This 177-nucleotide RNA was probed chemically with 2A3 and DMS.
DMS adducts were read by reverse transcription with MarathonRT.
The RNA was probed in 150 mM KOAc, 10 mM MgCl2 and 150 mM bicine (pH 8.5) at 24 C.
For 2A3, 2,407 sequencing reads were counted.

[RMDB]
RNA sequence: GGGAACGACUCGAGUAGAGUCGAAAAAGUCUACUUUUCGAAGUAGACUGUGGUCCCACUUGAUCGAGGUCUCACCGUGUCAUUGCCCACGACACUCGGGCGUAAUAGAUUGGUUCGCCAAUCUAAACCGCAUCCUAAAAUUCGUUUUAGGAUGCGGAAAAGAAACAACAACAACAAC
Reactivity to 2A3 in 0.01 (KOAc 150mM, MgCl2 10mM, bicine 150mM(pH8.5), 24C), signal-to-noise 2, nucleotides 027 to 126: a000g000u010c000u020a010c000u060u030u040u110c200g090a010a000g000u000a000g000a000c000u000g000u000g020g040u040c010c030c010a020c040u080u160g080a120u070c020g060a020g040g060u020c040u020c040a040c040c040g030u030g020u040c050a090u040u180g080c020c020c010a030c050g080a030c020a010c010u040c050g020g010g000c000g020u050a110a070u030a080g020a000u010u020g020g010u060u010c170g030c050c000a000a000u020c010u020a060a030a040
Reactivity to DMS in 0.01 (KOAc 150mM, MgCl2 10mM, bicine 150mM(pH8.5), 24C), signal-to-noise 4, nucleotides 027 to 126: a010g020u000c000u010a010c000u000u000u000u020c150g010a030a010g010u000a000g000a020c000u000g010u000g030g000u000c000c010c010a140c160u010u010g010a060u010c060g010a070g000g020u000c040u010c050a070c080c060g010u000g000u010c020a160u010u010g010c030c000c020a150c100g000a060c070a070c040u000c060g000g010g000c070g010u010a060a120u000a010g000a020u000u000g000g020u000u000c270g020c000c000a020a000u000c010u000a010a060a190